[RMDB]
The record gives the reactivity of an RNA of 177 nucleotides to DMS and 2A3.
For 2A3, 70,314 sequencing reads were counted.
The RNA was probed in 150 mM KOAc, 10 mM MgCl2 and 150 mM bicine (pH 8.5) at 24 C.
2A3 is a SHAPE reagent: it acylates the 2'-hydroxyl of flexible nucleotides of all four kinds.

RNA sequence: GGGAACGACUCGAGUAGAGUCGAAAAGACCUUAGGGGAAGGGAGACAUGCAAGACCAUGUCAUGUGAAUCCUAAGGAAGGAUGGGCGAAUUGUCUAUGGUCAUCCAAAGAUUCACAUUCCAUCCUAGAUAGUAUAGAAUUUCGAUUCUGUGCUAUCAAAAGAAACAACAACAACAAC
Reactivity to DMS in 0.01 (KOAc 150mM, MgCl2 10mM, bicine 150mM(pH8.5), 24C), signal-to-noise 9, nucleotides 027 to 126: g010a180c010c000u000u010a030g000g000g000g010a160a120g010g000g020a140g000a010c000a000u000g010c090a130a110g010a160c300c010a010u000g000u000c010a090u020g000u020g000a050a050u010c010c010u000a150a200g000g010a050a040g000g000a010u000g000g000g000c060g020a110a110u050u040g020u000c030u000a050u020g010g000u040c090a100u010c010c000a020a260a200g000a020u000u010c040a020c030a210u010u010c010c020a080u010c000c000u000a070
Reactivity to 2A3 in 0.01 (KOAc 150mM, MgCl2 10mM, bicine 150mM(pH8.5), 24C), signal-to-noise 9, nucleotides 027 to 126: g110a060c000c000u010u020a010g010g020g010g050a060a080g090g030g020a120g000a010c000a000u010g020c120a230a070g030a090c060c010a000u000g010u010c010a010u090g020u010g030a010a010u020c010c010u040a070a060g040g010a010a030g040g010a010u020g010g010g010c050g080a160a210u220u200g030u020c030u050a070u070g100g040u100c040a080u050c030c000a010a040a000g010a000u030u020c010a010c000a040u100u010c000c000a010u010c000c000u000a020